[RMDB]
RNA sequence: GGGAACGACUCGAGUAGAGUCGAAAACGGAUACGCUUCGGCGUAUCCGAAAUAAAGCCGGAAUAAAGCGCGCGCAAAAACCGGCAAUAAUGCGCGCGCAAAAAACGCGUCACUUCGGUGACGCGAACAUAAGUAGAAAGUUCGCUUUCUACUUAUGAAAAGAAACAACAACAACAAC
Reactivity to 2A3 in 0.01 (KOAc 150mM, MgCl2 10mM, bicine 150mM(pH8.5), 24C), signal-to-noise 1, nucleotides 027 to 126: c020g000g000a030u030a000c010g000c020u050u090c210g110g010c000g000u000a000u000c000c000g010a000a010a000u070a030a050a000g000c000c000g010g110a070a160u180a190a200a110g000c030g010c010g000c000g000c040a090a050a060a070a100c030c020g020g000c030a000a070u200a060a030u060g000c010g000c000g030c020g000c000a010a020a000a000a010a000c000g000c000g000u000c020a020c040u040u070c230g070g010u000g000a000c000g010c000g010a000a000
Reactivity to DMS in 0.01 (KOAc 150mM, MgCl2 10mM, bicine 150mM(pH8.5), 24C), signal-to-noise 2, nucleotides 027 to 126: c010g000g010a010u000a000c000g000c000u000u000c230g030g030c010g010u000a010u000c000c000g000a000a060a040u010a050a110a110g030c020c000g000g020a210a100u010a080a100a200g010c000g000c000g020c000g010c010a030a060a030a160a070c030c000g000g000c030a060a030u000a090a100u000g000c000g020c000g020c000g030c000a000a010a060a040a010a020c010g000c000g000u000c000a020c000u000u010c170g010g000u010g010a010c000g040c000g000a020a070